[RMDB]
RNA sequence: GGGAACGACUCGAGUAGAGUCGAAAAUAGGAGACGACGACGAAGCGCUGCUUGGUUCCGUAGUGGUGGCGCAGGACCACGGAGAUAGAACGACGGCUCCACAGCCAGUCCGGCCGGUCGCCGCCGGCUGGCUUCCCAUUUUCGAAUGGGAAGCCAGAAAAGAAACAACAACAACAAC
Reactivity to 2A3 in 0.01 (KOAc 150mM, MgCl2 10mM, bicine 150mM(pH8.5), 24C), signal-to-noise 9, nucleotides 027 to 126: u200a020g040g020a040g010a030c050g000a010c030g000a010c040g040a080a030g050c070g010c080u080g020c030u070u080g040g020u120u050c030c020g020u030a050g070u040g070g030u030g020g020c070g000c070a040g020g050a040c020c010a020c050g050g010a080g030a070u200a090g090a100a020c050g060a010c020g040g010c010u030c050c030a060c030a030g020c020c010a010g030u030c020c010g000g000c020c020g040g020u080c060g030c060c010g010c010c000g010g010
Reactivity to DMS in 0.01 (KOAc 150mM, MgCl2 10mM, bicine 150mM(pH8.5), 24C), signal-to-noise 7, nucleotides 027 to 126: u040a110g010g010a050g000a050c040g010a080c060g000a090c070g020a100a120g000c040g000c030u000g000c040u000u000g000g010u010u010c020c010g010u010a080g010u010g010g010u010g000g010c020g010c080a100g000g010a090c020c040a090c030g010g000a080g000a110u030a110g010a110a120c100g010a070c060g010g000c020u000c050c070a090c180a070g000c020c020a130g010u020c050c050g010g010c030c050g000g020u010c050g010c070c060g000c010c010g010g010